[RMDB]
RNA sequence: GGGAACGACUCGAGUAGAGUCGAAAAAGCACCGCAGCACCACGCGGAGUGGUCAUCACCUACCGCAACCUGCUGUCCAACAUGCGCGCAAUGGCCGUGGGCUCACAAUUCCAGCACGGCGAUGUCACACAAGCUCCAGAUUCGUCUGGAGCUUGUGAAAAGAAACAACAACAACAAC
Reactivity to DMS in 0.01 (KOAc 150mM, MgCl2 10mM, bicine 150mM(pH8.5), 24C), signal-to-noise 2, nucleotides 027 to 126: a050g000c030a080c060c040g000c080a100g040c030a130c050c060a090c110g000c100g010g000a130g000u000g010g000u000c120a010u030c000a030c010c030u010a070c070c000g010c100a100a130c110c100u060g000c020u000g000u000c030c020a090a080c070a070u010g000c030g040c010g010c080a070a130u020g000g040c030c000g020u000g000g000g000c150u000c040a110c150a070a150u010u030c000c040a070g000c010a020c030g000g040c010g020a140u010g010u010c150a240
Reactivity to 2A3 in 0.01 (KOAc 150mM, MgCl2 10mM, bicine 150mM(pH8.5), 24C), signal-to-noise 3, nucleotides 027 to 126: a020g070c070a060c070c040g000c060a020g000c000a000c050c020a020c030g020c000g000g000a050g010u070g020g100u150c040a110u090c020a050c020c010u230a180c000c050g000c020a020a080c010c010u040g000c020u030g050u070c000c000a050a030c050a070u130g020c050g000c000g000c060a060a110u100g120g000c000c010g030u010g000g050g010c060u070c040a120c030a040a100u190u020c020c000a020g050c000a020c000g000g000c050g060a090u090g080u110c040a000
Chemical mapping of a 177-nucleotide RNA with DMS and 2A3. The RNA was probed in 150 mM KOAc, 10 mM MgCl2 and 150 mM bicine (pH 8.5) at 24 C. It was measured as part of the RMDB library OK1LIB. For 2A3, 1,864 sequencing reads were counted.